[RMDB]
Structure probing data (2A3 and DMS) for a 177-nucleotide construct. For DMS the reverse transcriptase was MarathonRT.
RNA sequence: GGGAACGACUCGAGUAGAGUCGAAAACGCGCCCGUUGAGCUGCGCCAGUGGCUGGAAGAGGUGUUGCUGAAAAGCGAUUGAUUUUGUAGGCCUGAUAAGACGUGGCGCAUCAGGCAUCGUGCACCAUACCACUCAGGCAUUCGUGCCUGAGUGGUAAAAAGAAACAACAACAACAAC
Reactivity to 2A3 in 0.01 (KOAc 150mM, MgCl2 10mM, bicine 150mM(pH8.5), 24C), signal-to-noise 1, nucleotides 027 to 126: c000g060c000g010c010c000c000g000u080u110g040a070g050c070u040g010c000g050c040c040a040g080u070g070g000c000u040g030g220a090a030g010a050g000g070u080g030u090u060g050c000u010g010a000a050a000a000g000c010g060a000u030u170g120a090u040u080u060u210g120u100a030g000g110c000c000u050g040a080u060a240a060g060a020c050g090u110g000g030c020g000c000a000u020c020a000g030g050c020a050u060c040g000u030g000c020a040c010c010a010
Reactivity to DMS in 0.01 (KOAc 150mM, MgCl2 10mM, bicine 150mM(pH8.5), 24C), signal-to-noise 3, nucleotides 027 to 126: c060g000c300g010c010c010c030g030u000u010g010a090g020c050u000g030c020g000c110c100a100g000u000g000g020c000u000g000g010a120a080g020a070g030g010u010g000u000u010g020c010u010g000a080a090a120a070g040c000g000a080u000u010g000a170u000u010u000u000g020u000a190g000g000c000c000u000g010a090u020a090a150g000a030c050g020u000g010g020c000g010c020a020u000c010a040g020g020c020a040u000c070g040u000g000c110a120c090c040a210